Structure probing data (DMS and 2A3) for a 177-nucleotide construct. The reactions ran in a buffer of 150 mM KOAc, 10 mM MgCl2 and 150 mM bicine (pH 8.5), at 24 C. 2A3 adducts were read by reverse transcription with SuperScript II with manganese. As a SHAPE reagent, 2A3 marks flexible, mostly unpaired nucleotides at the ribose 2'-OH.
RNA sequence: GGGAACGACUCGAGUAGAGUCGAAAAGGAGUUAUUUAUAACUUAAAAUUUAUCCUGCCGAGGCUAAAAUUGACUUGAACGUGAUGAUCUAUGAUCUUUCAAGCACUUUUUGCCGUGGGUAGAAAGUAACGCUAUAUAUAUUCGUAUAUAUAGCGUUAAAAGAAACAACAACAACAAC
Reactivity to DMS in 0.01 (KOAc 150mM, MgCl2 10mM, bicine 150mM(pH8.5), 24C), signal-to-noise 3, nucleotides 027 to 126: g010g000a030g000u000u020a020u010u020u020a060u010a040a020c000u000u000a050a060a160a150u030u040u060a060u010c020c000u010g020c010c030g000a200g010g000c000u030a000a010a000a000u000u000g010a110c000u010u000g000a010a030c300g010u030g000a140u020g010a070u030c140u010a110u010g010a060u000c010u010u000u000c010a010a010g000c020a020c070u000u000u000u020u010g000c030c000g010u000g010g010g000u010a040g000a120a070a110g010u010
Reactivity to 2A3 in 0.01 (KOAc 150mM, MgCl2 10mM, bicine 150mM(pH8.5), 24C), signal-to-noise 6, nucleotides 027 to 126: g070g010a020g030u040u020a080u160u300u080a300u110a090a020c000u020u040a060a070a100a190u180u170u090a080u080c010c010u010g000c010c020g070a050g020g000c030u040a000a000a010a030u040u040g070a300c000u020u000g000a010a000c050g170u080g050a080u040g010a020u050c060u120a190u300g030a010u000c000u040u030u000c010a010a000g000c000a020c020u000u010u010u000u030g000c010c010g030u120g100g000g010u020a030g110a040a090a010g050u030